Background: Structure probing data (2A3 and DMS) for a 177-nucleotide construct. The 2A3 profile rests on 2,025 reads. DMS adducts were read by reverse transcription with MarathonRT.
RNA sequence: GGGAACGACUCGAGUAGAGUCGAAAACGAAUAGAAUUCGUUCUAUUCGAAUGACUGCUAAAAGCAGACUUGACUGCGCCGAGCAGAAACGGCAAAGGAAAAAGUAGCCCAGAUUCGUCUGGGCUAAGAUUGCUGGAAGAUUCGUCUUCCAGCAAUCAAAAGAAACAACAACAACAAC
Reactivity to 2A3 in 0.01 (KOAc 150mM, MgCl2 10mM, bicine 150mM(pH8.5), 24C), signal-to-noise 2, nucleotides 027 to 126: c000g000a000a010u000a010g000a000a020u070u060c150g020u090u010c010u010a020u000u000c010g010a030a040u090g030a060c000u030g000c050u100a080a110a040a010g000c010a010g000a070c050u050u080g150a030c000u020g010c020g030c020c010g060a060g040c120a090g270a130a040a010c000g020g000c000a010a070a110g070g020a020a100a040a040a020g070u020a010g000c000c000c000a010g000a010u000u020c150g030u020c060u000g020g010g000c000u010a000a010
Reactivity to DMS in 0.01 (KOAc 150mM, MgCl2 10mM, bicine 150mM(pH8.5), 24C), signal-to-noise 2, nucleotides 027 to 126: c020g010a040a000u000a000g010a020a060u000u020c200g000u000u010c000u000a000u000u000c000g000a100a090u000g010a150c000u000g000c020u000a060a100a040a160g000c000a000g000a060c020u000u000g000a260c010u000g010c300g000c000c010g030a140g000c080a060g000a020a090a090c060g000g000c020a070a300a050g010g010a060a040a110a130a040g000u000a010g010c000c000c000a000g000a050u000u000c200g010u000c000u000g020g000g010c010u000a020a020
Notes
Values cover nucleotides 27 to 126. The RNA was probed in 150 mM KOAc, 10 mM MgCl2 and 150 mM bicine (pH 8.5) at 24 C.